[RMDB]
RNA sequence: GGGAACGACUCGAGUAGAGUCGAAAAACGGAUGGUGCGCCAUCCGACCAUUGGGUAGAAGCGUUCAAUCAGCACCGUGACGGUGCAGAUGGGAAAUUGCCCAUGAUACGCACCAUACGUGGUGCGAAAAAGCCAUCGGUGUUCGCACCGAUGGCAAGCAUUGUGUAGAGUUCGCUCUACACAAUGCAAAAGAAACAACAACAACAAC
Reactivity to 2A3 in 0.01 (KOAc 150mM, MgCl2 10mM, bicine 150mM(pH8.5), 24C), signal-to-noise 2, nucleotides 027 to 156: a010c000g000g000a010u020g020g120u030g030c230g040c030c000a000u010c010c000g000a000c000c000a120u030u130g010g010g000u030a060g020a210a010g040c060g080u060u080c050a020a050u010c010a060g000c000a040c000c020g150u200g250a090c200g000g000u000g000c030a000g000a000u020g020g030g050a010a120a060u060u020g010c030c000c000a000u030g030a010u010a030c020g010c000a020c000c000a020u030a110c300g070u050g000g000u000g000c000g060a030a000a000a000a040g000c010c000a000u010c010g020g020u040g070u020u060c210g040c070a010c000c000g000a000u000g010g000c000a000a000
The record gives the reactivity of an RNA of 207 nucleotides to 2A3. For 2A3 the reverse transcriptase was SuperScript II with manganese. The 2A3 profile rests on 1,142 reads. The data come from the RNA Mapping Database (RMDB), library M2RFPK.